Description: Structure probing data (DMS and 2A3) for a 177-nucleotide construct. Conditions: 150 mM KOAc, 10 mM MgCl2 and 150 mM bicine (pH 8.5), 24 C. Values cover nucleotides 27 to 126. For DMS, 3,312 sequencing reads were counted. Source: RMDB library M2PK50, as collected in RNAgym.

RNA sequence: GGGAACGACUCGAGUAGAGUCGAAAAGCCCAUAUGUUCGCAUAUGGGCAAAAGCAGAUCUGAGCAUGCGAGCUCUCUGCGACAAAAGUCAACGCAAUAAAAAAACACGUCACUUCGGUGACGUGAAGUGAUGAAUACUGUUCGCAGUAUUCAUCACAAAAGAAACAACAACAACAAC
Reactivity to DMS in 0.01 (KOAc 150mM, MgCl2 10mM, bicine 150mM(pH8.5), 24C), signal-to-noise 3, nucleotides 027 to 126: g000c010c000c000a020u000a010u000g010u000u020c170g010c010a000u000a010u010g000g000g020c000a010a010a040a110g010c000a010g010a170u020c240u010g020a000g020c010a060u010g010c060g010a180g000c010u010c000u000c010u000g000c000g010a080c180a050a050a080a130g000u000c090a060a080c050g030c050a090a140u060a010a010a040a080a050a150a180c010a000c000g010u000c010a010c010u010u010c190g020g000u000g010a000c000g010u010g000a020a020
Reactivity to 2A3 in 0.01 (KOAc 150mM, MgCl2 10mM, bicine 150mM(pH8.5), 24C), signal-to-noise 6, nucleotides 027 to 126: g000c010c000c000a000u000a000u000g000u010u050c210g010c140a000u020a000u010g000g000g000c020a040a040a000a000g000c000a000g010a060u080c100u220g000a010g000c010a040u140g060c050g070a040g000c000u000c000u000c000u000g000c010g020a030c060a020a150a020a010g120u140c060a080a100c050g030c060a080a080u240a230a130a020a010a000a000a010c000a000c000g000u000c000a000c010u040u070c220g080g000u000g000a000c010g000u000g000a000a010